[RMDB]
RNA sequence: GGGAACGACUCGAGUAGAGUCGAAAAAUUCAUAGGCUCCCGUAGGGCCAGCAACGGACAGUCCCUCAAAUGCUGCAGGGAUGCGCUGGCGCAGCGCCUCAUCAUCUUCCAUCACUGCGGUGACCGGUAAUAAUAUGGGGUUCGCCCCAUAUUAUUAAAAAGAAACAACAACAACAAC
Reactivity to DMS in 0.01 (KOAc 150mM, MgCl2 10mM, bicine 150mM(pH8.5), 24C), signal-to-noise 7, nucleotides 027 to 126: a090u030u030c060a090u030a110g010g010c030u000c010c020c010g000u010a100g020g000g010c010c010a030g010c050a120a100c130g010g010a090c110a110g000u000c010c010c010u000c060a080a110a100u040g020c150u020g020c100a030g000g000g000a030u000g010c130g010c020u000g000g000c040g000c060a090g000c070g010c030c010u010c070a050u020c070a040u010c060u010u010c020c020a110u010c070a070c030u010g020c040g010g010u000g000a080c070c040g000g010
Reactivity to 2A3 in 0.01 (KOAc 150mM, MgCl2 10mM, bicine 150mM(pH8.5), 24C), signal-to-noise 9, nucleotides 027 to 126: a000u130u070c060a060u090a120g060g000c030u020c000c010c010g020u080a090g010g080g000c000c010a010g010c030a060a100c080g060g090a040c050a040g090u030c010c010c000u030c020a130a180a080u290g070c090u060g040c110a020g000g000g010a020u060g020c030g000c040u030g010g010c020g000c010a010g030c000g030c010c010u030c020a090u030c000a020u010c040u080u020c020c010a030u040c010a020c030u030g030c060g060g010u020g040a050c030c030g040g020

Source information
An RNA of 177 nucleotides, treated with DMS and 2A3 and read out base by base. 2A3 adducts were read by reverse transcription with SuperScript II with manganese. DMS adducts were read by reverse transcription with MarathonRT.